[RMDB]
RNA sequence: GGGAACGACUCGAGUAGAGUCGAAAACAUCAACGGACAUCAUAAAUAUGAGAUCCCCUCGUUUUAUGUUGAAGGUGCCAGUACCAGAGAGCUCAAUGAGUUGCGUACUUCUUGCUCUGCUGAAGUCAGCAUAACAAUCCUUCGGGAUUGUUAUGCUAAAAGAAACAACAACAACAAC
Reactivity to 2A3 in 0.01 (KOAc 150mM, MgCl2 10mM, bicine 150mM(pH8.5), 24C), signal-to-noise 1, nucleotides 027 to 126: c060a050u100c110a000a100c060g030g040a000c030a040u020c000a030u080a020a040a040u300a080u060g030a040g030a070u080c020c030c060c000u000c000g010u000u000u000u010a050u010g100u010u070g080a090a060g020g030u010g000c020c040a030g010u000a040c010c010a000g030a000g000a010g030c010u030c080a060a240u170g010a000g090u110u060g020c060g000u050a080c000u010u050c010u040u020g000c000u000c030u110g110c010u000g030a030a000g060u090c000
Reactivity to DMS in 0.01 (KOAc 150mM, MgCl2 10mM, bicine 150mM(pH8.5), 24C), signal-to-noise 2, nucleotides 027 to 126: c120a070u010c100a100a070c070g010g010a300c030a050u000c000a010u010a000a020a020u010a010u010g010a030g000a120u000c060c040c050c010u000c030g000u000u000u000u000a000u000g000u000u000g020a100a160g000g010u000g020c040c070a050g020u000a090c050c030a090g010a070g020a060g020c030u020c080a080a050u000g010a050g030u010u010g010c110g030u030a070c040u000u000c100u010u000g020c030u000c020u000g000c010u000g000a070a090g010u000c150
Chemical mapping of a 177-nucleotide RNA with 2A3 and DMS. For DMS, 1,844 sequencing reads were counted. It was measured as part of the RMDB library OK2TRN. DMS adducts were read by reverse transcription with MarathonRT. The RNA was probed in 150 mM KOAc, 10 mM MgCl2 and 150 mM bicine (pH 8.5) at 24 C.